[RMDB]
RNA sequence: GGGAACGACUCGAGUAGAGUCGAAAAGAUGAGAAUACGUGACUUGGUCAGAGGCGGAAAGACACAAGCACGAACGAUACAGUAGAGUAUCGAGCCGCCAACAGAUGCACGUUGUGAUCGUGCUAGAGCUCACGAUAUCAUUCGUGAUAUCGUGAGCAAAAGAAACAACAACAACAAC
Reactivity to 2A3 in 0.01 (KOAc 150mM, MgCl2 10mM, bicine 150mM(pH8.5), 24C), signal-to-noise 5, nucleotides 027 to 126: g070a020u260g030a020g090a150a040u150a050c000g000u000g060a090c000u000u010g010g000u030c020a020g070a090g090g000c020g020g020a160a050a000g030a030c060a000c000a160a000g000c000a000c090g050a090a000c020g000a000u010a020c010a030g300u300a050g090a030g090u010a010u050c010g000a020g070c000c030g000c020c020a010a010c050a050g120a100u180g010c010a000c020g030u070u110g200u090g080a120u160c030g000u000g000c000u070a040g010a010
Reactivity to DMS in 0.01 (KOAc 150mM, MgCl2 10mM, bicine 150mM(pH8.5), 24C), signal-to-noise 3, nucleotides 027 to 126: g030a090u030g000a080g000a190a040u050a140c040g000u000g020a130c000u020u010g000g000u000c040a140g000a160g000g000c040g000g000a110a150a050g000a040c020a110c020a070a010g000c000a010c030g010a060a140c050g020a020u000a000c030a180g030u060a020g010a140g000u000a010u000c040g020a210g010c040c020g030c010c080a180a070c170a060g040a110u090g010c040a000c030g050u000u000g020u000g010a050u030c040g040u020g000c000u030a080g000a300